[RMDB]
RNA sequence: GGGAACGACUCGAGUAGAGUCGAAAAGUUAGGUGAGGCUCCUAUGCAAACACAGGCCACUGCCCAAAAAUGUCCAAAGACGCCAAUGGGUAGAACAGGGAUUGUCGGAUUAAGUCUUUCCAUAAUGAAAACAAAGUAUGCUUCGGCAUACUUUGAAGUUUAUAAAAUGCUUCGGCAUUUUAUAAACAAAAGAAACAACAACAACAAC
Reactivity to 2A3 in 0.01 (KOAc 150mM, MgCl2 10mM, bicine 150mM(pH8.5), 24C), signal-to-noise 2, nucleotides 027 to 156: g070u060u080a040g000g030u020g040a010g000g020c000u070c050c050u110a090u170g020c010a030a130a020c040a030c020a090g090g050c020c010a030c000u000g000c000c000c000a010a030a020a010a020u000g000u030c000c030a220a070a080g010a000c000g020c010c010a020a030u020g020g000g000u000a000g000a070a010c050a050g000g020g070a080u070u060g030u060c060g000g020a040u070u180a030a070g020u000c000u020u030u040c020c020a050u070a210a050u180g060a070a090a020a020c010a000a000a000g000u000a000u000g000c010u030u050c120g090g000c000a000u000a000c000u000u000u000g000a000a000
Reactivity to DMS in 0.01 (KOAc 150mM, MgCl2 10mM, bicine 150mM(pH8.5), 24C), signal-to-noise 1, nucleotides 027 to 156: g000u000u000a070g000g020u000g010a120g030g060c010u000c060c000u040a180u000g010c040a110a110a100c060a080c060a070g020g020c000c050a110c030u010g000c000c000c000a000a060a030a080a060u000g010u000c020c050a070a130a120g030a080c070g020c000c040a020a300u000g000g010g010u000a030g000a100a160c050a150g010g010g020a050u000u010g010u000c000g040g020a160u000u020a050a090g000u000c020u000u000u020c010c030a100u000a120a060u010g010a110a060a080a220c010a020a040a050g000u000a000u000g020c000u010u000c300g050g000c010a000u000a000c000u010u000u000g000a000a110